[RMDB]
RNA sequence: GGGAACGACUCGAGUAGAGUCGAAAAUAAAUCAAUGACCUGAAGUGGGUAUGGAAUUGUUAUGACAAUGAUUUUUAUAACAACAAGGACAAUAAUGAUAAUGAUUAUCACAAUAAUAAUGAUUAUCAAACCUAGAUGCUCACCAGAAAUACCCAGAAGUACUUUUACUGUUCGCAGUAAAAGUACUAAAAGAAACAACAACAACAAC
Reactivity to 2A3 in 0.01 (KOAc 150mM, MgCl2 10mM, bicine 150mM(pH8.5), 24C), signal-to-noise 2, nucleotides 027 to 156: u070a010a030a020u120c020a000a130u090g080a070c010c000u020g010a160a030g060u010g000g000g040u060a050u040g000g090a060a120u040u020g010u010u020a010u020g050a040c070a130a150u080g060a090u150u140u040u080u000a020u010a010a000c000a030a000c030a030a010g000g020a030c080a150a110u170a180a040u080g000a000u010a020a000u010g100a000u040u030a000u050c010a000c030a170a080u160a160a000u010a010a000u020g090a010u030u020a000u000c000a040a050a050c000c010u060a070g010a140u030g000c000u040c010a000c000c020a010g050a050a120a020u060a080c000c000c020a030g090a030
Reactivity to DMS in 0.01 (KOAc 150mM, MgCl2 10mM, bicine 150mM(pH8.5), 24C), signal-to-noise 1, nucleotides 027 to 156: u020a070a130a180u020c050a090a060u000g000a080c040c030u100g020a150a120g000u000g010g010g080u000a040u000g000g020a170a040u010u000g010u010u000a030u010g000a020c130a140a060u000g030a060u000u000u000u000u000a000u000a020a040c010a050a010c020a110a140g020g010a110c070a070a080u000a090a270u000g010a020u000a020a010u010g000a050u000u000a020u000c040a050c020a020a120u000a030a010u000a040a000u000g000a020u000u000a010u010c010a040a110a220c050c050u010a180g020a150u000g000c030u000c000a050c050c030a100g020a030a080a170u000a040c020c010c000a280g020a110